[RMDB]
RNA sequence: GGGAACGACUCGAGUAGAGUCGAAAAAGCCUGCCGCGAUACGUCGCGGCAGGCAGGUGAAAAUGAUGAAUUCUGGGUCUCUGAGUCAUGUGACCUGAAAAAGGCCAUCCAUUUCCUGAUUCACCAAGAUAAACAUACGUUUCGACGUAUGUUUAUCAAAAGAAACAACAACAACAAC
Reactivity to DMS in 0.01 (KOAc 150mM, MgCl2 10mM, bicine 150mM(pH8.5), 24C), signal-to-noise 3, nucleotides 027 to 126: a070g010c010c000u010g020c010c010g050c010g000a040u000a060c160g010u000c000g050c000g020g000c020a010g000g010c000a010g010g010u000g000a020a030a090a100u010g010a030u000g000a150a110u000u000c070u010g030g010g010u000c020u000c030u000g000a160g010u010c100a040u020g010u010g000a030c000c000u010g000a030a050a050a080a070g000g010c100c000a030u000c060c180a100u000u000u010c010c000u000g000a280u010u000c020a030c030c010a160a140
Reactivity to 2A3 in 0.01 (KOAc 150mM, MgCl2 10mM, bicine 150mM(pH8.5), 24C), signal-to-noise 5, nucleotides 027 to 126: a000g030c000c000u000g000c000c000g070c020g000a010u040a060c210g090u000c000g000c000g000g000c000a000g000g000c000a000g000g010u030g010a030a040a040a070u150g030a020u050g020a030a120u120u030c080u160g020g000g020u020c020u000c020u080g140a150g160u100c080a070u260g060u090g040a030c000c000u010g040a020a050a030a040a010g050g010c020c000a000u040c050c000a050u040u030u010c000c000u040g040a110u020u030c020a030c040c020a030a030
The record gives the reactivity of an RNA of 177 nucleotides to DMS and 2A3.
2A3 adducts were read by reverse transcription with SuperScript II with manganese.
The reactions ran in a buffer of 150 mM KOAc, 10 mM MgCl2 and 150 mM bicine (pH 8.5), at 24 C.